[RMDB]
Chemical mapping of a 177-nucleotide RNA with DMS and 2A3. 2A3 adducts were read by reverse transcription with SuperScript II with manganese. For DMS the reverse transcriptase was MarathonRT. It was measured as part of the RMDB library M2PK50.

RNA sequence: GGGAACGACUCGAGUAGAGUCGAAAACUACAUAAAUUCGUUUAUGUAGCAUCGGGGACGCGCAGACUCCCCGUCAGACGGCUCUAGCCAUCCAAGCUCUGCACUCAACAGCUUUCGAGCUGUUGAAUGAUAGCCUACACUUCGGUGUAGGCUAUCAAAAAGAAACAACAACAACAAC
Reactivity to DMS in 0.01 (KOAc 150mM, MgCl2 10mM, bicine 150mM(pH8.5), 24C), signal-to-noise 2, nucleotides 027 to 126: c000u000a010c000a010u000a000a010a000u010u010c190g000u000u000u000a000u010g000u000a010g000c170a060u010c020g000g000g010g020a020c170g010c140g010c010a020g000a040c030u010c000c010c000c000g000u000c070a030g000a040c060g010g000c010u000c300u010a130g000c000c000a010u010c020c300a030a010g020c060u000c000u000g010c000a220c180u010c000a000a000c010a000g000c010u000u000u020c150g020a010g020c000u010g000u010u000g010a020a040
Reactivity to 2A3 in 0.01 (KOAc 150mM, MgCl2 10mM, bicine 150mM(pH8.5), 24C), signal-to-noise 2, nucleotides 027 to 126: c000u000a000c000a020u000a000a050a020u070u060c160g040u060u010u000a020u000g020u010a020g000c040a120u200c020g000g010g000g010a030c050g100c020g000c280a010g000a030c010u020c040c010c000c010g040u020c000a020g000a030c020g000g000c010u050c100u230a080g020c020c010a000u030c050c080a010a010g000c040u000c000u010g000c010a030c040u010c010a000a000c010a000g020c000u110u090u150c200g170a020g020c010u000g000u000u000g000a000a010